RNA sequence: GGGAACGACUCGAGUAGAGUCGAAAAGAUAUGGACACGUUGCUUUUGACGAUCUAAGGGUCGGAAACGACCCGAAGAUCGAUAAGCACCGUGUCCUAAGUCAAAUCGCAUAGUUCGCUAUGCGAAACGCCUCUUAUCACUUCGGUGAUAAGAGGCGAAAAGAAACAACAACAACAAC
Reactivity to DMS in 0.01 (KOAc 150mM, MgCl2 10mM, bicine 150mM(pH8.5), 24C), signal-to-noise 1, nucleotides 027 to 126: g010a080u010a300u000g000g030a000c000a010c010g030u000u000g010c000u000u000u000u000g010a190c160g000a000u000c000u000a050a300g030g000g000u000c000g020g010a030a070a110c010g000a000c010c040c010g000a120a060g000a030u000c010g000a040u000a000a000g010c010a000c010c000g000u000g010u000c000c000u000a000a080g010u000c010a060a130a070u010c020g030c000a030u000a000g000u010u010c220g010c000u000a010u000g000c030g000a000a040a080
Reactivity to 2A3 in 0.01 (KOAc 150mM, MgCl2 10mM, bicine 150mM(pH8.5), 24C), signal-to-noise 1, nucleotides 027 to 126: g010a010u040a030u110g000g000a010c000a020c020g000u030u000g000c030u090u140u110u290g300a180c080g010a000u000c000u010a040a120g000g000g020u000c010g000g000a060a030a030c000g010a000c010c030c000g010a010a000g000a020u010c000g020a000u000a000a010g010c010a000c010c000g000u000g020u000c000c000u000a000a000g000u010c030a020a020a110u020c010g000c000a000u010a020g010u050u060c300g000c100u010a000u000g000c000g000a010a010a010
Chemical mapping of a 177-nucleotide RNA with DMS and 2A3. Source: RMDB library TTRDEL, as collected in RNAgym. The reactions ran in a buffer of 150 mM KOAc, 10 mM MgCl2 and 150 mM bicine (pH 8.5), at 24 C.